[RMDB]
RNA sequence: GGGAACGACUCGAGUAGAGUCGAAAAUUCAUUGAGCAUUUAAAUCACUCUUUACUGUGCCAGGUAUUGUGGGUAUUGUGCCAGGUACUGUUACAGCCUAGCAGGUUCUUCUUGCCUGCUGCACAGAAAAAGCCAAUACACUGAGACUGGUGUUGCACACUUAUGAGUCAUUCGUGACUCAUAAGUGAAAAGAAACAACAACAACAAC
Reactivity to DMS in 0.01 (KOAc 150mM, MgCl2 10mM, bicine 150mM(pH8.5), 24C), signal-to-noise 2, nucleotides 027 to 156: u000u010c060a080u010u010g000a080g040c040a130u000u000u000a090a140a190u000c110a060c020u000c010u000u000u010a130c090u000g000u000g030c010c030a040g000g000u000a040u010u000g030u010g020g000g000u000a030u000u010g010u010g030c000c000a070g030g000u000a100c040u010g000u020u010a070c040a050g030c030c100u000a070g000c040a090g000g010u000u000c090u010u000c050u000u000g010c010c010u000g020c040u010g050c050a060c010a070g030a040a070a080a140a070g020c050c030a020a060u000a020c030a040c020u020g000a110g000a110c090u010g000g010u000g020u000u000g010c030a180
Reactivity to 2A3 in 0.01 (KOAc 150mM, MgCl2 10mM, bicine 150mM(pH8.5), 24C), signal-to-noise 7, nucleotides 027 to 156: u090u030c030a010u040u110g050a030g030c070a080u140u130u280a100a140a110u150c040a050c050u060c000u050u100u130a120c060u070g050u080g040c000c000a020g020g050u110a110u120u130g060u130g060g040g020u030a020u030u080g100u070g030c040c020a050g040g020u070a050c040u030g070u110u100a080c050a030g020c000c020u040a020g000c010a000g010g010u060u060c030u120u020c030u050u060g010c000c000u010g000c050u040g000c010a010c010a000g070a030a060a000a000a000g020c020c000a030a010u050a030c070a030c060u060g040a010g040a130c030u030g000g050u030g030u030u040g030c060a030
Annotation
An RNA of 207 nucleotides, treated with DMS and 2A3 and read out base by base. 2A3 adducts were read by reverse transcription with SuperScript II with manganese. For 2A3, 5,653 sequencing reads were counted. For DMS, 5,693 sequencing reads were counted.